Notes
Source: RMDB library M2PK50, as collected in RNAgym. Chemical mapping of a 177-nucleotide RNA with DMS and 2A3. Values cover nucleotides 27 to 126.

RNA sequence: GGGAACGACUCGAGUAGAGUCGAAAACCCUUUGUGUUCGCACAAAGGGAAAAGUCAGUAAGAUCAAAAAGAUCAGCGAUAAAACUGACAAAUAAACGCAAAAAACCUCCUCGUUCGCGAGGAGGAAGAAUAAGAUAUCGUUCGCGAUAUCUUAUUCAAAAGAAACAACAACAACAAC
Reactivity to DMS in 0.01 (KOAc 150mM, MgCl2 10mM, bicine 150mM(pH8.5), 24C), signal-to-noise 5, nucleotides 027 to 126: c000c000c000u000u000u000g020u000g020u010u000c180g040c000a010c000a000a000a020g010g020g010a010a020a070a130g010u000c010a000g010u000a110a130g000a020u010c000a060a140a120a170a170g000a010u000c010a140g030c200g010a110u000a060a070a090a050c010u000g000a000c000a070a100a060u000a060a040a110c150g010c150a000a050a060a040a110a090c010c000u000c000c000u000c000g020u010u000c210g020c020g000a010g000g010a010g010g000a000a000
Reactivity to 2A3 in 0.01 (KOAc 150mM, MgCl2 10mM, bicine 150mM(pH8.5), 24C), signal-to-noise 8, nucleotides 027 to 126: c000c000c000u000u000u000g020u010g010u020u060c210g050c060a000c000a000a000a000g000g000g000a060a130a010a020g010u000c000a000g000u040a140a030g010a020u010c040a040a270a230a100a020g010a020u010c020a040g140c090g140a060u080a200a110a010a010c000u000g010a000c020a000a050a000u110a020a030a010c080g000c090a050a070a020a020a090a130c000c000u000c000c000u000c010g020u040u060c270g010c010g080a000g000g000a000g000g000a000a000